The record gives the reactivity of an RNA of 177 nucleotides to 2A3 and DMS.
RNA sequence: GGGAACGACUCGAGUAGAGUCGAAAAAGCGGUUCAUUGCCGACGGCAUACCGCCGGAUCGGGCGCACGAGCUGGCGGUGUUGGCGACGUCGACGCUCGAGGGCGCAAUCUUGCUGGCUCGGGUGCGCCUGCGGCUAACCUUCGGGUUAGCCGCAGGAAAAGAAACAACAACAACAAC
Reactivity to 2A3 in 0.01 (KOAc 150mM, MgCl2 10mM, bicine 150mM(pH8.5), 24C), signal-to-noise 3, nucleotides 027 to 126: a000g020c030g010g010u110u160c100a060u110u230g050c010c000g090a070c020g000g000c000a040u060a090c000c050g000c020c000g020g010a070u090c040g030g030g040c040g000c040a070c010g020a000g020c000u000g010g000c010g020g010u060g080u090u120g100g040c020g030a080c020g110u060c030g000a100c030g060c110u150c060g010a050g060g050g030c020g000c010a020a090u080c030u120u300g000c010u040g020g010c000u000c000g060g020g030u040g010c000g010
Reactivity to DMS in 0.01 (KOAc 150mM, MgCl2 10mM, bicine 150mM(pH8.5), 24C), signal-to-noise 1, nucleotides 027 to 126: a080g070c070g000g010u000u040c100a110u020u020g000c010c000g000a100c120g010g050c030a040u030a010c060c050g000c020c020g000g020a140u000c050g000g000g010c050g000c000a030c070g000a030g010c010u000g020g020c020g000g000u020g000u040u010g000g000c050g000a020c000g010u000c000g000a220c270g010c280u040c020g030a010g030g000g000c040g000c000a040a070u000c040u100u040g020c000u000g000g000c000u010c000g000g020g050u000g070c020g000
For 2A3 the reverse transcriptase was SuperScript II with manganese. Source: RMDB library OK1LIB, as collected in RNAgym. The RNA was probed in 150 mM KOAc, 10 mM MgCl2 and 150 mM bicine (pH 8.5) at 24 C. The DMS profile rests on 2,189 reads. DMS adducts were read by reverse transcription with MarathonRT.